[RMDB]
RNA sequence: GGGAACGACUCGAGUAGAGUCGAAAAGAUAUGGACUAUCCUACUGCCCUUUGAUCUCGCUCGGAAACGAGCGAGGGAGGGUUGUAGGAGUAGUCCUAAGUCAAACUGGGUUCUUCGGAACCCAGAACACUGUAUGAGGGUUCGCCCUCAUACAGUGAAAAGAAACAACAACAACAAC
Reactivity to DMS in 0.01 (KOAc 150mM, MgCl2 10mM, bicine 150mM(pH8.5), 24C), signal-to-noise 3, nucleotides 027 to 126: g000a050u000a300u000g010g010a010c000u000a030u000c000c000u010a000c010u000g000c000c000c010u020u000u020g010a050u000c010u000c000g020c000u000c000g000g000a150a160a220c030g010a010g010c000g010a020g010g000g010a000g000g010g020u000u000g010u000a000g000g000a020g030u010a010g010u000c000c000u000a010a100g000u000c030a130a130a300c010u000g010g000g010u000u000c010u000u020c240g020g010a000a000c010c000c000a000g000a090a210
Reactivity to 2A3 in 0.01 (KOAc 150mM, MgCl2 10mM, bicine 150mM(pH8.5), 24C), signal-to-noise 2, nucleotides 027 to 126: g050a010u100a090u240g000g010a000c000u000a020u010c000c000u000a010c010u030g020c000c010c010u250u260u080g080a070u040c000u000c010g030c000u010c000g030g030a080a130a120c020g010a000g000c020g000a000g000g010g000a010g000g000g010u000u020g000u000a000g010g020a000g010u000a000g000u000c000c000u000a080a010g020u050c040a090a030a160c000u000g000g000g000u030u030c000u060u090c300g140g010a000a010c010c040c000a000g000a000a000

The record gives the reactivity of an RNA of 177 nucleotides to DMS and 2A3. The 2A3 profile rests on 6,470 reads. 2A3 adducts were read by reverse transcription with SuperScript II with manganese. The RNA was probed in 150 mM KOAc, 10 mM MgCl2 and 150 mM bicine (pH 8.5) at 24 C.